[RMDB]
RNA sequence: GGGAACGACUCGAGUAGAGUCGAAAAGAUAUGGAGUGGUAGGGAGAAGCAUGGUCGGAAACGACCAUGACUUCGAAGAACUACGUAACAUCUCCUAAGUCAAAAUCAUACGCUUCGGCGUAUGAAACAAAGAGUGGAAGUUCGCUUCCACUCUUUGAAAAGAAACAACAACAACAAC
Reactivity to DMS in 0.01 (KOAc 150mM, MgCl2 10mM, bicine 150mM(pH8.5), 24C), signal-to-noise 5, nucleotides 027 to 126: g000a010u010a030u010g000g010a020g030u000g000g020u000a000g010g010g000a020g010a000a010g010c000a000u000g000g010u000c000g020g000a010a020a050c000g020a010c000c000a000u000g000a090c000u000u000c000g010a080a130g000a150a230c000u000a000c010g020u020a100a250c260a090u020c020u000c000c000u000a010a140g000u010c010a100a070a100a090u000c000a010u000a000c000g010c010u000u020c220g040g010c000g020u000a000u000g000a020a110a160
Reactivity to 2A3 in 0.01 (KOAc 150mM, MgCl2 10mM, bicine 150mM(pH8.5), 24C), signal-to-noise 2, nucleotides 027 to 126: g000a000u000a010u050g000g000a010g010u070g000g020u030a010g000g000g010a020g000a000a010g000c010a000u010g000g000u020c000g020g000a010a010a010c000g010a000c000c010a010u000g030a070c000u000u020c020g030a130a010g000a000a000c000u000a000c030g060u090a110a080c030a220u110c020u000c000c010u010a030a000g010u000c010a040a000a030a300u020c010a000u010a020c000g010c000u050u110c300g160g000c000g000u000a000u000g000a000a000a000